Overview: An RNA of 207 nucleotides, treated with DMS and 2A3 and read out base by base. Values cover nucleotides 27 to 156. For DMS the reverse transcriptase was MarathonRT. High DMS reactivity at an A or C suggests that its Watson-Crick edge is free.
[RMDB]
RNA sequence: GGGAACGACUCGAGUAGAGUCGAAAACUUAACUGGCCAGAUAAGAAAAGACCGAGAGGUUCAAGCUUAUAGGGCAGAAAGCGGGGGACAGCAGUACUAAACAUUGCCUGUGGCUGAGACGAAGGUAAAAAGGGUCAUAACUUCGGUUAUGACCCAAGGUAGUAGAAUAGUUCGCUAUUCUACUACCAAAAGAAACAACAACAACAAC
Reactivity to DMS in 0.01 (KOAc 150mM, MgCl2 10mM, bicine 150mM(pH8.5), 24C), signal-to-noise 1, nucleotides 027 to 156: c060u010u000a070a090c090u000g010g050c000c000a220g040a040u010a000a050g000a000a110a270a180g010a030c010c000g010a290g000a200g080g040u010u000c050a100a250g030c000u000u000a030u000a200g020g010g020c010a040g000a020a040a090g010c030g020g000g000g040g040a110c060a040g000c030a090g030u020a070c090u010a150a120a130c070a070u010u000g030c000c040u000g020u020g000g000c000u000g000a110g000a110c010g000a080a060g030g040u000a040a090a140a060a130g020g010g010u020c000a040u000a000a040c010u000u010c300g050g020u000u000a000u000g000a030c000c010c000a000a000
Reactivity to 2A3 in 0.01 (KOAc 150mM, MgCl2 10mM, bicine 150mM(pH8.5), 24C), signal-to-noise 1, nucleotides 027 to 156: c020u020u030a090a050c060u060g070g010c010c000a070g050a170u040a070a000g030a030a120a010a000g000a010c000c060g040a010g000a040g170g020u090u090c050a080a000g000c000u030u020a020u040a150g020g010g000c000a000g060a030a040a010g030c050g000g000g000g000g000a020c030a010g010c000a020g030u030a020c020u050a000a050a140c050a100u050u100g020c000c010u040g000u030g050g010c030u010g020a000g000a070c040g070a060a060g020g030u180a000a000a000a000a050g020g000g010u020c020a000u000a000a000c010u040u010c090g000g000u000u000a000u000g000a000c000c000c000a010a000